RNA sequence: GGGAACGACUCGAGUAGAGUCGAAAAGCUACAGCAGCGAGCAGGCGUUCUAUGAUGGUCUCGUCGAGCUGAUGAAGCGCGGGGCCUGCUACACGGCUAACCACCAUGCGCUAACCAUAACGCUGACGGUGAAAUGCCAAUUCGUUGGCAUUUCACCAAAAGAAACAACAACAACAAC
Reactivity to 2A3 in 0.01 (KOAc 150mM, MgCl2 10mM, bicine 150mM(pH8.5), 24C), signal-to-noise 3, nucleotides 027 to 126: g040c020u060a070c030a070g040c020a000g000c030g050a040g000c030a030g060g040c020g040u120u040c070u070a120u090g100a050u080g040g060u020c000u000c010g120u100c140g030a030g000c010u030g000a080u120g040a090a010g000c000g000c010g010g010g000g000c000c010u030g000c010u040a020c050a030c110g030g020c020u060a030a030c010c010a050c000c000a080u150g000c000g000c030u020a020a050c050c020a060u080a110a020c020g020c020u040g030a030c030
Reactivity to DMS in 0.01 (KOAc 150mM, MgCl2 10mM, bicine 150mM(pH8.5), 24C), signal-to-noise 2, nucleotides 027 to 126: g000c000u000a080c100a060g000c020a130g010c080g000a150g000c060a060g000g000c000g000u000u000c080u000a080u050g000a040u020g020g020u000c020u020c070g010u040c210g000a110g040c000u010g000a110u010g000a240a050g040c010g000c010g000g000g010g000c050c000u020g000c020u040a070c180a080c050g000g000c010u000a120a010c050c060a140c100c020a110u010g010c110g000c010u070a030a230c060c010a050u010a140a070c010g020c000u000g010a150c220